[RMDB]
RNA sequence: GGGAACGACUCGAGUAGAGUCGAAAAGAUACCCCUGUGGGUAACAGUGACAGGGAAAAGAGGGAGCAUUUGUCUUUAUCCGUAGCACAGAAAGUCAAGCUGUUGGAGAAACUGGACAGCAAUAUAAAUGUGAAAUGUCCUACAGAAGAGUAUGGUGCCUUCACAAUACAUUCGUGUAUUGUGAAGGAAAAGAAACAACAACAACAAC
Reactivity to 2A3 in 0.01 (KOAc 150mM, MgCl2 10mM, bicine 150mM(pH8.5), 24C), signal-to-noise 3, nucleotides 027 to 156: g060a030u140a100c000c000c000c020u040g030u080g030g030g020u070a100a050c050a060g050u040g100a030c010a030g000g010g050a040a090a070a000g050a040g000g040g010a010g040c040a040u040u080u170g100u040c060u070u100u030a130u040c000c020g050u040a010g000c010a030c000a030g090a060a060a010g060u070c080a030a010g010c020u030g030u100u000g040g010a070g060a070a080a060c090u060g030g010a000c000a020g020c000a050a000u120a030u060a160a080a030u100g020u020g100a020a020a110u040g010u020c000c020u000a010c020a050g080a130a010g020a050g050u140a100u250g030g030u090g030
Reactivity to DMS in 0.01 (KOAc 150mM, MgCl2 10mM, bicine 150mM(pH8.5), 24C), signal-to-noise 1, nucleotides 027 to 156: g040a160u000a070c020c000c010c070u000g010u000g050g050g040u020a150a130c050a090g040u000g030a120c030a150g000g000g000a030a040a060a090g010a070g030g000g010a120g020c020a140u000u000u000g000u000c010u000u000u000a070u020c030c010g050u000a070g020c060a050c080a100g000a060a050a110g000u010c100a070a200g030c010u000g040u010u030g020g020a070g010a050a050a140c090u000g030g030a030c020a170g020c060a050a080u000a180u000a050a050a130u000g030u000g020a030a080a060u000g000u000c030c070u000a190c040a060g010a050a020g000a050g040u000a040u000g010g030u010g000

Overview:
This 207-nucleotide RNA was probed chemically with 2A3 and DMS. Source: RMDB library OK3TST, as collected in RNAgym. 2A3 adducts were read by reverse transcription with SuperScript II with manganese. The reactions ran in a buffer of 150 mM KOAc, 10 mM MgCl2 and 150 mM bicine (pH 8.5), at 24 C.